[RMDB]
RNA sequence: GGGAACGACUCGAGUAGAGUCGAAAAGUAUAGCAUGACUGGCUAUGCGUAUACGAUGAAUCAGCCAGUAAAGAAUCCGUUGUGCGAAAGCACUUCGGUAAUGCAUAAUCGGUUCGAGUACAGCCCGGUACGAGAACCGUUGUUAGUACGGGCAAGACCAUAUUAAUACCUUCGGGUAUUAAUAUGGAAAAGAAACAACAACAACAAC
Reactivity to DMS in 0.01 (KOAc 150mM, MgCl2 10mM, bicine 150mM(pH8.5), 24C), signal-to-noise 3, nucleotides 027 to 156: g060u000a070u000a110g020c000a050u000g030a120c010u000g010g000c000u000a060u000g030c060g040u000a080u000a110c110g000a170u000g030a130a080u000c070a050g030c020c000a060g000u010a070a040a130g030a280a180u000c000c010g030u000u000g020u010g040c010g010a140a100a300g030c010a010c000u000u000c010g050g040u010a010a030u000g020c080a130u000a110a080u010c030g000g030u000u000c010g040a300g030u000a010c020a030g010c020c010c000g000g000u000a020c010g010a300g000a030a010c000c020g040u000u000g000u000u010a090g010u000a110c060g000g010g040c060a130a140g010a250
Reactivity to 2A3 in 0.01 (KOAc 150mM, MgCl2 10mM, bicine 150mM(pH8.5), 24C), signal-to-noise 4, nucleotides 027 to 156: g040u050a050u110a170g000c000a020u040g050a060c010u010g010g000c010u020a020u090g030c020g020u070a090u050a140c130g120a170u200g110a060a120u140c030a020g000c010c010a010g020u050a030a120a010g050a020a060u040c000c000g000u000u000g000u000g000c000g050a050a020a010g000c000a000c000u000u000c000g000g000u030a060a010u060g030c050a080u080a230a080u270c040g020g010u000u000c000g010a010g010u000a000c000a040g020c010c010c000g010g000u010a000c000g000a000g000a020a000c000c010g000u010u010g000u000u070a110g010u020a050c070g000g020g000c060a060a010g070a040